This 177-nucleotide RNA was probed chemically with 2A3 and DMS. Reactivities are given for positions 27 through 126. It was measured as part of the RMDB library OK1LIB. For DMS the reverse transcriptase was MarathonRT. For DMS, 9,912 sequencing reads were counted. For 2A3, 6,588 sequencing reads were counted.
RNA sequence: GGGAACGACUCGAGUAGAGUCGAAAAACGGCUGUGGGCUGAUGUGCUGUGGGCGUGGCUAUCGGCGAGACGAGGUCGUCGUUGUGGAGCGGUGCGCCUGCACCUUCCACUGGUGCUGCGAGGUGAAGCGAAAAUUAAUGUUCGCAUUAAUUUUCGCAAAAGAAACAACAACAACAAC
Reactivity to 2A3 in 0.01 (KOAc 150mM, MgCl2 10mM, bicine 150mM(pH8.5), 24C), signal-to-noise 5, nucleotides 027 to 126: a000c010g020g000c020u050g030u130g040g030g000c000u020g010a040u050g040u050g020c030u030g010u110g040g010g020c010g010u020g010g000c010u030a050u100c010g010g010c020g010a030g040a050c070g020a030g010g110u050c030g010u010c020g030u040u090g010u040g030g010a020g020c160g000g030u020g000c050g160c020c040u080g000c000a000c000c000u030u030c000c000a010c040u030g000g000u050g000c050u030g000c030g030a050g030g060u090g040a100a040
Reactivity to DMS in 0.01 (KOAc 150mM, MgCl2 10mM, bicine 150mM(pH8.5), 24C), signal-to-noise 3, nucleotides 027 to 126: a050c060g010g000c020u020g000u010g000g000g010c030u000g000a060u050g000u030g000c020u010g010u010g010g000g020c010g020u000g000g010c040u000a020u010c050g000g000c030g000a140g000a060c110g020a140g010g010u020c050g010u010c010g010u010u020g010u000g000g000a050g000c160g000g000u010g000c040g030c180c150u020g020c000a000c000c000u000u000c020c040a040c050u000g000g010u020g000c010u000g000c030g000a100g000g030u010g020a150a160